Structure probing data (DMS and 2A3) for a 177-nucleotide construct. The reactions ran in a buffer of 150 mM KOAc, 10 mM MgCl2 and 150 mM bicine (pH 8.5), at 24 C. For DMS the reverse transcriptase was MarathonRT. 2A3 adducts were read by reverse transcription with SuperScript II with manganese.
RNA sequence: GGGAACGACUCGAGUAGAGUCGAAAAUAUUAGGGUGUGAGAGUAUCUCUCUCCCAGCCGGUUCGCCCAGCCAUCUUUUUCGACUUUACUUGGGUUAGCUGCGCGAACUGGCUGGCGUUCCCAGCAAAGUCAUUAUUCAGUUCGCUGAAUAAUGACUAAAAGAAACAACAACAACAAC
Reactivity to DMS in 0.01 (KOAc 150mM, MgCl2 10mM, bicine 150mM(pH8.5), 24C), signal-to-noise 4, nucleotides 027 to 126: u000a050u010u000a200g000g000g010u000g000u000g010a010g010a050g010u010a130u010c080u000c000u000c030u010c030c010c000a020g010c010c000g010g020u000u000c010g020c010c050c010a030g020c010c140a060u000c020u000u000u000u000u000c030g000a060c030u000u000u000a060c180u000u000g010g010g010u000u000a040g010c000u010g020c300g010c020g010a020a010c010u000g010g000c000u000g000g000c010g010u000u000c010c000c010a190g020c220a040a060
Reactivity to 2A3 in 0.01 (KOAc 150mM, MgCl2 10mM, bicine 150mM(pH8.5), 24C), signal-to-noise 2, nucleotides 027 to 126: u110a040u050u090a030g000g030g000u030g000u010g020a010g000a020g040u280a300u110c060u000c000u000c010u010c050c000c000a000g000c000c000g000g000u000u000c010g000c030c090c000a000g010c010c030a150u090c120u060u180u030u040u070c030g050a040c030u160u200u250a080c050u160u210g080g000g030u050u080a020g000c010u000g020c000g000c010g000a000a010c000u010g000g000c010u000g000g000c010g000u000u000c000c000c010a000g030c020a030a210